[RMDB]
RNA sequence: GGGAACGACUCGAGUAGAGUCGAAAACGAUUAGCAUUCGUGCUAAUCGAAUCACGUAGUACCUAUCUCUAUUACCUGUAGUGGCCAACGUCCGGACAGAGAAUCGAGUCCUGUUCGCAGGACUCAAGUACUACAUCUGUUUCGACAGAUGUAGUACAAAAGAAACAACAACAACAAC
Reactivity to DMS in 0.01 (KOAc 150mM, MgCl2 10mM, bicine 150mM(pH8.5), 24C), signal-to-noise 7, nucleotides 027 to 126: c010g010a010u010u000a010g010c000a050u000u010c210g040u000g010c000u000a000a000u000c000g000a080a120u010c100a090c160g010u000a040g010u000a110c040c020u000a090u010c040u000c030u000a070u020u000a070c070c040u010g010u000a060g030u010g000g010c050c060a050a060c150g010u000c040c020g010g000a080c100a080g010a080g010a080a100u010c130g000a030g000u000c000c000u000g010u010u020c190g020c010a010g000g010a010c000u000c000a020a060
Reactivity to 2A3 in 0.01 (KOAc 150mM, MgCl2 10mM, bicine 150mM(pH8.5), 24C), signal-to-noise 9, nucleotides 027 to 126: c000g000a000u000u000a000g000c010a000u020u060c230g100u060g000c000u000a000a000u010c000g000a000a050u090c040a020c130g090u090a040g030u050a080c010c010u060a080u110c030u010c020u050a110u130u140a110c020c000u040g040u080a060g050u060g100g010c040c040a100a030c070g040u020c020c020g030g020a040c030a030g080a010g040a100a090u170c110g000a000g000u000c000c000u010g020u030u060c230g010c050a000g000g000a000c000u000c000a000a010

Chemical mapping of a 177-nucleotide RNA with DMS and 2A3. Values cover nucleotides 27 to 126. The 2A3 profile rests on 25,795 reads. The RNA was probed in 150 mM KOAc, 10 mM MgCl2 and 150 mM bicine (pH 8.5) at 24 C.